[RMDB]
Structure probing data (DMS and 2A3) for a 177-nucleotide construct. High 2A3 reactivity points to a flexible backbone, as in loops and unpaired stretches.
RNA sequence: GGGAACGACUCGAGUAGAGUCGAAAAGAGCUUUUUUUCGAAAAAGCUCCGGCGCAAUGCCAAUGUGUACACUUCACAAGGGUUUGUGGUGGUCAAUGGCAAUACCAGCAAUCUUCGGAUUGCUGAACCGCUAAUCUAAAUUCGUUUAGAUUAGCGGAAAAGAAACAACAACAACAAC
Reactivity to DMS in 0.01 (KOAc 150mM, MgCl2 10mM, bicine 150mM(pH8.5), 24C), signal-to-noise 3, nucleotides 027 to 126: g000a010g000c000u010u000u010u000u000u000u010c110g010a040a010a000a020a010g020c000u000c010c050g010g040c110g000c120a100a080u010g010c020c010a030a080u010g010u000g010u000a130c070a040c030u010u010c020a010c020a030a060g010g020g020u010u000u000g020u010g020g030u000g010g010u000c020a050a080u010g000g010c020a070a080u010a110c150c000a010g010c000a010a010u000c000u010u010c190g020g000a010u000u000g000c010u000g000a040a080
Reactivity to 2A3 in 0.01 (KOAc 150mM, MgCl2 10mM, bicine 150mM(pH8.5), 24C), signal-to-noise 3, nucleotides 027 to 126: g010a020g000c000u000u000u010u000u000u060u130c120g010a010a000a010a000a000g000c000u000c000c010g070g010c060g000c090a080a110u100g020c010c010a020a060u090g060u010g020u100a050c050a020c090u080u150c040a010c020a060a060g300g040g140u090u150u020g040u050g000g020u030g030g000u060c020a040a060u040g000g000c000a030a060u090a180c030c000a000g000c000a000a010u000c000u010u040c190g100g010a000u010u010g000c000u000g010a000a020